[RMDB]
RNA sequence: GGGAACGACUCGAGUAGAGUCGAAAAUCCUUGCAAUAGCAUGUUAGGUUCGCAUGGUGCACUAUUGUGUUAUUAGUAACUAAGUAAGCUUACAAUCGAAAAUGUUUAACCAUAAAAGGGUAAAAUGCGAAGACCAUAUCUUCGGAUAUGGUCUUCGAAAAGAAACAACAACAACAAC
Reactivity to 2A3 in 0.01 (KOAc 150mM, MgCl2 10mM, bicine 150mM(pH8.5), 24C), signal-to-noise 3, nucleotides 027 to 126: u000c000c000u000u010g000c050a020a040u010a070g020c020a010u030g090u040u060a180g070g030u080u050c030g030c050a020u140g220g020u190g070c020a000c040u030a030u040u220g020u000g000u000u030a000u000u010a040g010u000a080a070c070u030a170a010g120u020a140a030g260c100u130u100a050c070a120a140u230c100g120a130a040a000a000u050g010u090u160u080a050a040c000c000a060u180a140a200a010a070g150g010g000u070a030a080a010a010u110g050
Reactivity to DMS in 0.01 (KOAc 150mM, MgCl2 10mM, bicine 150mM(pH8.5), 24C), signal-to-noise 2, nucleotides 027 to 126: u020c000c030u000u000g000c060a060a050u010a010g010c010a010u020g000u000u000a020g020g010u000u000c080g020c010a160u010g010g000u000g010c040a170c030u000a040u000u000g020u000g000u020u000a010u040u000a110g000u000a000a030c110u000a130a080g020u000a050a150g020c110u000u010a060c100a030a080u040c110g040a070a050a100a030u010g000u000u000u040a060a070c030c020a030u010a040a070a110a100g010g000g000u010a050a050a050a020u030g010

Chemical mapping of a 177-nucleotide RNA with 2A3 and DMS. Values cover nucleotides 27 to 126. It was measured as part of the RMDB libraries RFM100 and RFMREP.